[RMDB]
RNA sequence: GGGAACGACUCGAGUAGAGUCGAAAAAAUUAAGCGCCGAUUCCAAUCAGCGCGACUACGCCCUCGCUGCCUGAUCAGCGACGGCUAGCUGUCGGCCCGGGUUGUGUUCCCGAACCCGGAUGCCGGCAUCAUCUCAGGGAACUCACCGUGUUCGCCGCACAAUUAGAGGGUUCGCCCUCUAAUUGUGAAAAGAAACAACAACAACAAC
Reactivity to 2A3 in 0.01 (KOAc 150mM, MgCl2 10mM, bicine 150mM(pH8.5), 24C), signal-to-noise 2, nucleotides 027 to 156: a020a030u250u190a090a090g000c020g000c010c020g040a070u270u090c080c070a090a060u000c020a030g010c000g020c020g020a030c020u050a000c130g010c000c000c020u000c000g000c000u000g010c040c090u230g050a210u190c040a000g000c010g010a000c000g000g020c010u000a010g040c070u020g010u030c000g000g000c000c000c000g000g000g010u010u030g050u000g000u020u020c010c000c000g020a000a000c000c020c000g020g000a030u120g010c000c000g020g000c000a020u080c010a000u000c010u040c050a050g000g030g050a030a040c020u060c140a080c070c100g040u050g050u090u040c030g070c080c050g030

An RNA of 207 nucleotides, treated with 2A3 and read out base by base. The reactions ran in a buffer of 150 mM KOAc, 10 mM MgCl2 and 150 mM bicine (pH 8.5), at 24 C.